Structure probing data (DMS and 2A3) for a 177-nucleotide construct. The RNA was probed in 150 mM KOAc, 10 mM MgCl2 and 150 mM bicine (pH 8.5) at 24 C. It was measured as part of the RMDB library OK1LIB. DMS (dimethyl sulfate) methylates the pairing face of unpaired adenines and cytosines. Values cover nucleotides 27 to 126. Reactivities are rounded to 0.1 and cut off at 0 and 3. DMS adducts were read by reverse transcription with MarathonRT.

RNA sequence: GGGAACGACUCGAGUAGAGUCGAAAAGAAAGUAGCGAACAAAGCUGGACGGGAAGUAGGUCCAGCGACUACUUCCGAAGAGCAACUCCAUCUACGUUGCUCAAGUAGGUGGUGCUACGAAAAGAAAGGGUAUAGCUAACUUCGGUUAGCUAUACCCAAAAGAAACAACAACAACAAC
Reactivity to DMS in 0.01 (KOAc 150mM, MgCl2 10mM, bicine 150mM(pH8.5), 24C), signal-to-noise 2, nucleotides 027 to 126: g030a070a030a090g000u000a000g060c000g000a120a050c300a060a030a110g010c000u000g010g000a110c000g000g020g130a090a070g010u030a100g000g000u000c020c000a010g000c000g000a010c080u000a000c020u000u000c050c070g000a020a040g000a000g000c000a010a030c010u060c240c200a140u060c130u030a120c120g020u010u000g000c000u000c070a000a210g000u000a000g000g000u000g010g000u020g030c000u020a000c000g010a000a020a120a130g000a140a070a050
Reactivity to 2A3 in 0.01 (KOAc 150mM, MgCl2 10mM, bicine 150mM(pH8.5), 24C), signal-to-noise 2, nucleotides 027 to 126: g120a000a050a020g010u010a000g000c020g060a080a100c010a120a070a020g000c000u000g040g000a000c010g070g070g170a180a080g160u250a070g120g000u000c000c000a000g020c000g000a010c000u030a010c000u070u000c000c010g010a090a000g010a000g000c000a040a020c010u100c120c010a210u050c050u150a080c220g020u010u070g040c040u010c020a000a020g020u020a000g000g020u000g000g020u120g000c010u000a000c010g040a020a030a020a000g150a040a020a000